Structure probing data (DMS and 2A3) for a 177-nucleotide construct. 2A3 is a SHAPE reagent: it acylates the 2'-hydroxyl of flexible nucleotides of all four kinds.
RNA sequence: GGGAACGACUCGAGUAGAGUCGAAAAGAUAUGGACUAAGGGAGAGGGUGGUCGGAAACGACCACACCUCUUUGAUCUUAGGUCCUAAGUCAAAACGAGUCUUGAUCGUUCGCGAUCAAGACUCGAACUCAAGUACAAUGUUCGCAUUGUACUUGAGAAAAGAAACAACAACAACAAC
Reactivity to DMS in 0.01 (KOAc 150mM, MgCl2 10mM, bicine 150mM(pH8.5), 24C), signal-to-noise 6, nucleotides 027 to 126: g000a040u010a300u010g000g010a130c000u010a010a010g000g010g010a020g010a020g010g010g030u000g010g010u000c000g000g000a060a070a180c010g010a010c000c000a000c000a040c000c000u000c000u000u010u010g010a050u010c000u000u000a020g010g010u000c000c000u010a040a110g010u010c040a080a060a110a200c020g000a010g010u000c000u010u000g000a000u000c000g020u010u010c250g010c010g000a010u010c000a000a000g000a010c000u000c000g010a010a070
Reactivity to 2A3 in 0.01 (KOAc 150mM, MgCl2 10mM, bicine 150mM(pH8.5), 24C), signal-to-noise 3, nucleotides 027 to 126: g030a010u060a030u110g000g000a000c000u010a000a000g020g010g000a070g010a000g000g010g000u000g000g000u000c010g010g020a040a060a030c000g000a000c000c000a010c010a020c000c000u010c000u020u020u010g010a000u000c000u000u020a040g080g080u030c000c000u000a100a020g070u030c030a010a010a090a170c020g000a000g000u010c000u000u020g000a000u000c010g070u110u080c300g010c030g110a000u010c000a000a000g000a010c000u010c000g000a010a000